Structure probing data (DMS and 2A3) for a 170-nucleotide construct. The reactions ran in a buffer of 150 mM KOAc, 10 mM MgCl2 and 150 mM bicine (pH 8.5), at 24 C. The DMS profile rests on 69,169 reads. DMS adducts were read by reverse transcription with MarathonRT.
RNA sequence: GGGAACGACUCGAGUAGAGUCGAAAAUGUGUAGAUCAUAGACCUGUGUGUAGUUUUCCACUUUGCGCUAAUGGUCUUGUAUUCGGCUUAUACAAGAAUAUGUGCACAGGUAGUCCUUCUAUAGUUGGCGCUUCAGUGUUCGCACUGAAGAAAAGAAACAACAACAACAAC
Reactivity to DMS in 0.01 (KOAc 150mM, MgCl2 10mM, bicine 150mM(pH8.5), 24C), signal-to-noise 6, nucleotides 027 to 129: u050g040u020g000u020a000g020a100u040c020a000u040a090g000a020c030c010u020g020u000g000u000g010u060a130g000u020u000u020u010c050c060a040c070u010u000u000g020c050g000c060u040a010a010u030g030g000u000c020u000u020g000u000a040u000u000c110g060g000c130u040u020a040u000a030c040a000a000g000a040a070u040a060u010g000u000g040c020a010c030a030g030g000u000a060g000u010c010c040u000u020c090u000a050u000a100g040u000u000g000g000c130g020
Reactivity to 2A3 in 0.01 (KOAc 150mM, MgCl2 10mM, bicine 150mM(pH8.5), 24C), signal-to-noise 9, nucleotides 027 to 129: u150g040u010g030u070a020g020a130u150c020a050u070a050g080a040c000c000u010g000u010g000u000g030u050a150g060u060u040u080u060c030c010a030c000u070u060u090g030c050g000c020u070a080a030u080g090g000u010c000u000u010g010u010a030u020u120c080g120g000c110u120u110a040u000a040c010a020a010g020a040a030u110a030u150g030u040g000c000a000c000a010g020g000u010a030g040u060c020c000u060u050c050u100a150u050a110g030u020u030g030g010c030g000